[RMDB]
The record gives the reactivity of an RNA of 177 nucleotides to DMS and 2A3. It was measured as part of the RMDB library OK2TST. For DMS the reverse transcriptase was MarathonRT.
RNA sequence: GGGAACGACUCGAGUAGAGUCGAAAAAUCUUGCGUAAUUUCGCUAAUCGAUUUCGCGCCAGUCAGCGUCAUUGCCACUUUCAUCUCUUUUUCGAUUAGAUUAAGCAGAUUUGCCACGCCCGCCUGGGAAAGGUAACCGAUUCGUCGGUUACCUUUCAAAAGAAACAACAACAACAAC
Reactivity to DMS in 0.01 (KOAc 150mM, MgCl2 10mM, bicine 150mM(pH8.5), 24C), signal-to-noise 3, nucleotides 027 to 126: a040u000c020u000u010g030c010g010u000a060a080u010u000u000c170g010c040u010a020a040u000c040g010a040u010u000u000c090g000c080g030c050c090a080g020u010c110a090g000c030g040u000c110a090u000u010g000c030c030a050c100u000u000u000c070a070u010c040u010c020u000u000u000u010u000c010g000a090u000u000a040g000a070u000u010a030a090g010c000a020g000a040u000u000u000g000c080c060a070c160g010c010c010c010g000c100c070u010g010g010
Reactivity to 2A3 in 0.01 (KOAc 150mM, MgCl2 10mM, bicine 150mM(pH8.5), 24C), signal-to-noise 2, nucleotides 027 to 126: a000u020c010u030u100g020c000g040u060a070a210u070u180u160c090g000c060u070a030a050u100c000g010a000u040u060u060c070g000c040g050c000c010a070g050u080c050a010g020c000g070u040c020a070u020u110g020c010c010a050c020u060u100u070c070a120u000c010u000c000u040u080u010u050u060c010g020a030u000u100a070g060a050u000u050a040a020g000c050a000g020a030u010u040u110g040c040c010a030c040g000c000c010c010g050c020c000u090g080g070